Notes
The record gives the reactivity of an RNA of 177 nucleotides to 2A3 and DMS. It was measured as part of the RMDB library M2PK50.
RNA sequence: GGGAACGACUCGAGUAGAGUCGAAAAGGUAGCCACUUCGGUGGCUACCAAAGAGAUAGUACCUAUUGAGUUCCUGUGUAGGUACUCAUGACAGGAAGUCAAAAACAUGAUUCUUCGGAAUCAUGAAGGAAUACUUCAUGUUCGCAUGAAGUAUUCCAAAAGAAACAACAACAACAAC
Reactivity to 2A3 in 0.01 (KOAc 150mM, MgCl2 10mM, bicine 150mM(pH8.5), 24C), signal-to-noise 4, nucleotides 027 to 126: g000g010u000a010g000c020c010a000c010u040u060c170g100g000u010g000g020c010u000a000c010c010a010a010a000g030a000g010a010u070a090g010u020a010c000c000u020a030u030u140g100a080g040u030u020c010c010u040g020u050g030u090a010g020g000u010a010c000u010c020a080u120g020a010c020a030g050g240a200a070g050u040c050a060a040a010a030a050c010a010u020g000a010u010u010c020u040u080c240g130g010a000a010u000c010a010u020g020a020a050
Reactivity to DMS in 0.01 (KOAc 150mM, MgCl2 10mM, bicine 150mM(pH8.5), 24C), signal-to-noise 4, nucleotides 027 to 126: g010g020u000a000g010c000c000a010c000u000u020c180g040g020u000g000g000c000u000a000c000c000a000a020a100g010a150g020a160u000a040g020u000a030c000c000u000a050u000u010g010a130g010u000u000c000c000u010g010u000g020u000a010g000g000u010a010c010u000c080a050u000g010a020c040a110g010g010a110a190g010u010c030a070a060a060a100a160c010a010u000g000a020u000u000c000u010u010c180g010g000a030a010u000c000a000u000g000a080a090